[RMDB]
RNA sequence: GGGAACGACUCGAGUAGAGUCGAAAAGACGCCUUUAGAAGAAGAGGCUAGGGGGUAUUCCGGUGUGUGAUACUUAGUAAUAUGCAACGCUAAUUGCAUAAGAUUGUAGGACGGAAUUUACAGUCUUUAGAGAUAAGCACGUUCGCGUGCUUAUCAACAAUGCAUCGCUGUUCGCAGCGAUGCAUUGAAAAGAAACAACAACAACAAC
Reactivity to DMS in 0.01 (KOAc 150mM, MgCl2 10mM, bicine 150mM(pH8.5), 24C), signal-to-noise 1, nucleotides 027 to 156: g000a100c130g000c010c020u000u000u000a070g010a170a210g000a180a120g000a060g020g010c050u000a040g010g000g030g010g020u000a040u000u000c000c040g030g000u020g050u010g010u000g000a180u000a080c060u000u000a110g030u010a070a130u000a020u000g010c000a010a080c070g000c120u010a080a100u000u000g020c010a050u020a030a060g000a120u000u000g030u000a030g010g020a160c040g020g010a050a170u010u000u000a000c010a040g000u000c000u000u030u030a140g000a140g030a020u000a010a000g070c030a030c000g060u000u000c300g050c080g040u000g010c010u000u000a010u000c010a070a120
Reactivity to 2A3 in 0.01 (KOAc 150mM, MgCl2 10mM, bicine 150mM(pH8.5), 24C), signal-to-noise 4, nucleotides 027 to 156: g070a020c060g020c010c000u070u080u100a150g040a210a020g020a040a010g020a040g020g000c020u040a050g040g010g020g000g010u030a050u040u070c030c040g040g010u070g000u020g020u030g080a030u030a100c020u060u120a050g030u070a050a090u030a040u060g010c000a030a030c040g030c190u100a130a050u060u010g000c000a000u000a060a020g030a050u050u110g050u030a010g000g090a010c040g000g030a030a020u080u050u060a040c030a020g020u020c000u020u050u090a110g030a000g000a070u010a000a000g000c000a000c000g000u040u100c190g020c010g120u000g010c000u000u000a000u000c000a000a000